The data come from the RNA Mapping Database (RMDB), library OK2TRN. This 177-nucleotide RNA was probed chemically with 2A3 and DMS. For DMS, 12,855 sequencing reads were counted.
[RMDB]
RNA sequence: GGGAACGACUCGAGUAGAGUCGAAAAGGGAGCUGCGCGACACCGGCGCCAACCAGACCAUCGACCAGGCACGCCCUUGCCACCCUUGUUGUGUGAUGUGCGCGCAGGUGAAGAUUUUUGGUGGGUAUGGAUAGAUUAUCUUCGGAUAAUCUAUCCAAAAAGAAACAACAACAACAAC
Reactivity to 2A3 in 0.01 (KOAc 150mM, MgCl2 10mM, bicine 150mM(pH8.5), 24C), signal-to-noise 2, nucleotides 027 to 126: g030g010g010a040g060c040u030g010c040g000c010g070a060c000a000c040c050g100g010c030g000c000c010a010a020c020c010a010g050a060c010c020a050u070c060g020a030c030c030a000g040g000c030a020c080g010c000c010c000u000u070g030c000c000a070c050c000c000u040u080g070u080u060g060u000g030u030g090a130u130g060u060g000c020g000c010g010c030a020g020g030u090g050a080a090g040a110u090u150u110u150u110g030g000u060g020g020g030u050a080
Reactivity to DMS in 0.01 (KOAc 150mM, MgCl2 10mM, bicine 150mM(pH8.5), 24C), signal-to-noise 7, nucleotides 027 to 126: g000g010g000a160g020c060u010g010c030g020c020g000a130c040a050c050c070g010g010c060g020c030c070a060a080c060c080a100g010a100c090c060a060u000c060g000a100c070c070a110g000g010c040a050c080g010c030c020c020u000u000g000c040c030a120c050c040c060u010u000g000u010u000g010u010g010u000g010a090u000g010u000g020c020g010c010g010c020a020g010g010u010g000a080a110g000a140u000u010u010u000u000g010g020u000g000g000g000u000a150

Reactivities are given for positions 27 through 126.